[RMDB]
Record summary
Source: RMDB library M2PK90, as collected in RNAgym. The record gives the reactivity of an RNA of 177 nucleotides to DMS and 2A3.
RNA sequence: GGGAACGACUCGAGUAGAGUCGAAAAAGAAAGGUAUAUCAAAGAUCGAAAGAUCUACAAUGCUCGAUAGAUAUACAUCCCAAAUGAAGUAACAAAUCGAGCAACUUCAACGGAAACGACAAAAAAACCGAUCUAAUAAGUUCGCUUAUUAGAUCGGAAAAGAAACAACAACAACAAC
Reactivity to DMS in 0.01 (KOAc 150mM, MgCl2 10mM, bicine 150mM(pH8.5), 24C), signal-to-noise 1, nucleotides 027 to 126: a080g000a080a050a080g000g000u000a000u000a000u010c000a110a180a040g010a010u000c000g000a080a050a180g000a020u000c020u000a100c160a060a060u000g000c010u000c000g000a030u000a070g000a020u000a000u000a000c000a090u000c010c000c000a040a110a150u000g000a070a050g000u000a070a090c070a070a080a070u000c010g000a010g020c000a100a040c010u010u010c000a070a210c160g020g010a020a030a070c100g020a020c050a000a030a040a040a110a160a110
Reactivity to 2A3 in 0.01 (KOAc 150mM, MgCl2 10mM, bicine 150mM(pH8.5), 24C), signal-to-noise 2, nucleotides 027 to 126: a000g050a010a080a000g060g000u000a010u000a000u010c010a000a190a060g010a000u000c030g030a100a000a010g000a000u000c010u010a010c060a040a100u060g010c000u000c010g010a000u030a140g010a010u000a000u010a010c000a050u090c020c000c010a000a030a030u150g000a000a010g050u070a100a100c140a110a150a060u050c030g020a030g070c000a010a000c010u070u040c030a080a050c060g120g040a100a120a030c030g050a060c120a040a100a030a000a030a020a020
Background: 2A3 adducts were read by reverse transcription with SuperScript II with manganese. For DMS, 839 sequencing reads were counted. 2A3 is a SHAPE reagent: it acylates the 2'-hydroxyl of flexible nucleotides of all four kinds. For DMS the reverse transcriptase was MarathonRT.